[RMDB]
RNA sequence: GGGAACGACUCGAGUAGAGUCGAAAAAUAAAGCAACGCGAGCAACGCGAGCAACGCGAGCAACGCGAGCAACGCGAGCAACGCGUGCAACGCGAGCAACGCGAGCAACGCGAGCAACGCGAAAAAACACUUGCAAGAUGUUCGCAUCUUGCAAGUGAAAAGAAACAACAACAACAAC
Reactivity to DMS in 0.01 (KOAc 150mM, MgCl2 10mM, bicine 150mM(pH8.5), 24C), signal-to-noise 1, nucleotides 027 to 126: a090u000a070a020a070g000c090a150a160c000g000c000g030a300g030c140a190a040c140g000c040g030a210g000c080a030a020c030g010c000g010a110g030c050a040a040c000g000c000g000a040g010c130a060a030c060g010c000g000a130g000c210a210a120c070g000c000g020u000g000c000a110a040c000g000c000g000a120g040c070a070a060c030g020c010g000a240g000c090a020a070c030g000c000g000a070g030c000a150a100c100g000c030g010a000a080a070a070a060a060
Reactivity to 2A3 in 0.01 (KOAc 150mM, MgCl2 10mM, bicine 150mM(pH8.5), 24C), signal-to-noise 1, nucleotides 027 to 126: a000u070a000a050a000g110c030a050a100c040g020c000g040a030g000c040a130a150c010g000c010g040a030g010c030a070a090c000g030c000g030a040g050c040a020a230c010g030c000g010a000g000c060a160a130c000g070c010g010a080g120c090a090a250c020g000c010g000u060g000c010a090a120c030g040c000g000a100g000c040a070a180c000g000c000g000a000g020c000a040a090c020g000c000g000a050g050c020a100a100c020g000c000g070a120a000a000a020a000a000
Structure probing data (DMS and 2A3) for a 177-nucleotide construct. Values cover nucleotides 27 to 126. The data come from the RNA Mapping Database (RMDB), library M2PK90. For DMS the reverse transcriptase was MarathonRT. The 2A3 profile rests on 1,231 reads. For 2A3 the reverse transcriptase was SuperScript II with manganese. The DMS profile rests on 523 reads.